[RMDB]
RNA sequence: GGGAACGACUCGAGUAGAGUCGAAAACGAAAUGUCAAAUGGUAACAUUCUCUAAAUCUCGUACGCUUGUGACUGUGGAAGCACAUCCAUUCACAACUCGUAUCUGGGAUGACGAGAAAGAGUUCUGUAACGUACUUGACUGUUACGCUAUGUACAAAUUUUACCAGGUGUUCGCACCUGGUAAAAUAAAAGAAACAACAACAACAAC
Reactivity to DMS in 0.01 (KOAc 150mM, MgCl2 10mM, bicine 150mM(pH8.5), 24C), signal-to-noise 3, nucleotides 027 to 156: c040g040a100a170a120u000g010u000c030a040a090a140u000g040g020u000a060a090c030a140u000u000c000u000c030u000a120a260a040u000c030u000c000g030u000a010c010g020c300u000u000g000u000g000a050c300u010g020u000g070g010a050a250g030c240a080c230a230u000c020c000a040u000u000c000a040c030a000a020c130u010c010g040u000a020u000c030u010g010g060g000a010u010g000a230c300g000a040g000a030a020a060g010a100g010u000u000c020u020g010u000a030a000c020g050u000a020c030u000u000g010a210c110u010g010u000u000a010c000g010c020u000a000u000g030u000a100c080a020a150
Reactivity to 2A3 in 0.01 (KOAc 150mM, MgCl2 10mM, bicine 150mM(pH8.5), 24C), signal-to-noise 4, nucleotides 027 to 156: c020g040a020a010a030u210g020u070c030a030a050a070u210g020g000u030a020a000c010a050u030u010c000u000c000u030a060a040a090u000c010u010c010g000u010a000c000g000c010u030u010g010u000g010a040c130u130g020u040g050g030a050a070g160c130a060c030a170u020c010c000a000u020u020c000a000c000a020a020c050u030c050g000u010a040u030c100u140g020g000g010a000u000g010a010c050g000a000g000a010a010a010g020a000g000u070u040c040u110g170u140a060a070c100g000u020a030c000u060u070g070a100c030u030g020u050u020a020c050g030c060u080a030u200g070u070a040c030a020a130
The data come from the RNA Mapping Database (RMDB), library OK3TST. Chemical mapping of a 207-nucleotide RNA with DMS and 2A3. For DMS the reverse transcriptase was MarathonRT. DMS (dimethyl sulfate) methylates the pairing face of unpaired adenines and cytosines. The DMS profile rests on 4,043 reads. The RNA was probed in 150 mM KOAc, 10 mM MgCl2 and 150 mM bicine (pH 8.5) at 24 C. 2A3 adducts were read by reverse transcription with SuperScript II with manganese.